Overview: The record gives the reactivity of an RNA of 177 nucleotides to 2A3 and DMS. Source: RMDB library OK1LIB, as collected in RNAgym. The RNA was probed in 150 mM KOAc, 10 mM MgCl2 and 150 mM bicine (pH 8.5) at 24 C.
RNA sequence: GGGAACGACUCGAGUAGAGUCGAAAAGAAAGGAAAACAGUCAGGUCGAACAAAAGGAAUGGGAAGCAAAACUCGGAAAUUUGUUAACAUGUACUCAUAUGAUGCAGACGACUUCUCUUUUGUAAGGCUACUCUGCUCCAUUCGUGGAGCAGAGUAGAAAAGAAACAACAACAACAAC
Reactivity to 2A3 in 0.01 (KOAc 150mM, MgCl2 10mM, bicine 150mM(pH8.5), 24C), signal-to-noise 3, nucleotides 027 to 126: g070a010a040a000g080g040a050a050a000a000c020a010g030u040c040a010g040g030u020c030g050a030a020c040a080a070a000a020g050g070a020a040u080g010g040g000a080a000g000c000a030a040a070a110c070u050c160g040g090a110a130a100u140u070u050g010u100u060a050a040c050a100u130g100u080a020c000u000c050a020u110a040u260g010a000u030g020c030a000g050a070c050g000a030c010u000u000c030u060c000u010u040u030u000g080u090a070a040g020g000
Reactivity to DMS in 0.01 (KOAc 150mM, MgCl2 10mM, bicine 150mM(pH8.5), 24C), signal-to-noise 2, nucleotides 027 to 126: g030a010a000a010g010g000a090a060a140a180c130a080g020u000c040a080g000g010u010c080g020a050a010c090a070a000a080a090g000g050a080a050u000g000g000g010a110a050g000c060a060a010a140a060c070u030c160g040g000a100a090a150u020u010u000g000u000u000a080a060c080a030u000g010u030a120c140u000c000a100u010a140u010g010a060u030g020c040a030g020a060c060g070a120c000u010u000c000u020c000u000u000u000u000g020u020a050a110g030g000